[RMDB]
RNA sequence: GGGAACGACUCGAGUAGAGUCGAAAACACACAAUUCGAAUAAAAGGGUCUGUCCCUCUUCGUCGCAAGAUCCAUCUUGGAAAACGGAAGAAAAUUUCCCAUAGUUCCGUCUACGGAUGCAGGCUCACCGUCACCGUACGUUCGCGUACGGUGACGGAAAAGAAACAACAACAACAAC
Reactivity to 2A3 in 0.01 (KOAc 150mM, MgCl2 10mM, bicine 150mM(pH8.5), 24C), signal-to-noise 2, nucleotides 027 to 126: c070a040c030a010c010a000a300u160u100c000g190a080a120u270a230a110a020a150g040g040g000u030c060u070g080u080c000c000c000u010c030u020u020c010g130u080c040g020c020a010a010g020a040u000c000c000a070u000c080u100u300g020g030a000a120a000a000c010g020g050a030a030g090a000a120a010a060u070u120u030c010c010c000a010u010a000g100u000u050c000c000g000u000c020u040a030c040g000g000a010u060g100c000a010g020g130c000u000c050a040

Structure probing data (2A3) for a 177-nucleotide construct. The reactions ran in a buffer of 150 mM KOAc, 10 mM MgCl2 and 150 mM bicine (pH 8.5), at 24 C. The data come from the RNA Mapping Database (RMDB), library OK1LIB.